[RMDB]
RNA sequence: GGGAACGACUCGAGUAGAGUCGAAAAAACCCGGAGAUAUCUCGUUCUCCCCGAAAUAGCUUUAGGGCUAGCGUCGCGCGUUAACCCCGGGAGGUAGAGCACCGGAUCGAUGAGGGGGCUUCGCCGCCGGAUUGGCAAUUUUCGAAUUGCCAAUCCGAAAAGAAACAACAACAACAAC
Reactivity to DMS in 0.01 (KOAc 150mM, MgCl2 10mM, bicine 150mM(pH8.5), 24C), signal-to-noise 3, nucleotides 027 to 126: a060a090c000c000c000g010g000a040g020a170u020a040u000c190u000c010g000u010u000c010u000c020c010c030c050g010a030a050a100u010a020g010c030u000u000u010a080g040g010g010c040u000a040g000c070g000u010c070g000c060g000c070g030u010u020a100a130c040c010c010c030g010g000g010a060g000g030u010a050g000a110g030c050a100c030c020g000g020a120u030c110g010a090u030g000a180g000g010g000g020g010c030u000u000c050g010c020c010g010c090
Reactivity to 2A3 in 0.01 (KOAc 150mM, MgCl2 10mM, bicine 150mM(pH8.5), 24C), signal-to-noise 6, nucleotides 027 to 126: a000a010c010c000c010g040g010a060g010a030u190a080u090c050u010c010g010u050u000c040u040c000c000c010c010g060a050a060a110u110a020g020c020u090u120u150a130g070g030g000c010u010a030g000c000g050u040c030g010c000g000c030g050u040u070a090a080c010c000c000c010g040g020g010a060g000g030u080a060g020a010g070c030a010c010c000g060g010a070u080c030g050a070u080g030a110g030g010g000g020g020c000u060u050c040g020c010c000g030c020